Structure probing data (2A3) for a 207-nucleotide construct. Values are in units of 0.01, from 0 to 300, in steps of 10. Conditions: 150 mM KOAc, 10 mM MgCl2 and 150 mM bicine (pH 8.5), 24 C. Reactivities are given for positions 27 through 156.

RNA sequence: GGGAACGACUCGAGUAGAGUCGAAAAGAAAGAAAGAAAGUUCAUUGUUUAUCGGAAACUUUAAACCAUAACCAUUCAAACUUUUCCAGAAGUUAGUUUGAAUAGAAAUUAAAAAGAAACUUCUGAAUGACCUUGGCACCGUUCGCGGUGCCAAGAAGACGUGUAGAUAGUUCGCUAUCUACACGUCAAAAGAAACAACAACAACAAC
Reactivity to 2A3 in 0.01 (KOAc 150mM, MgCl2 10mM, bicine 150mM(pH8.5), 24C), signal-to-noise 1, nucleotides 027 to 156: g040a000a030a000g100a030a050a000g040a050a090a010g040u070u040c060a040u020u250g020u120u090u150a130u150c030g010g050a070a060a060c040u040u040u070a090a070a050c030c030a010u040a060a000c030c000a000u000u000c000a000a020a000c000u000u010u010u010c030c000a010g000a010a010g000u000u020a000g000u000u000u000g000a010a000u030a170g010a060a010a000u170u240a030a090a030a110a000g030a000a000a000c000u010u020c000u000g030a020a070u070g010a000c000c030u000u010g000g000c020a020c020c040g030u060u050c090g050c040g090g000u000g050c000c000a000a000g000a010a000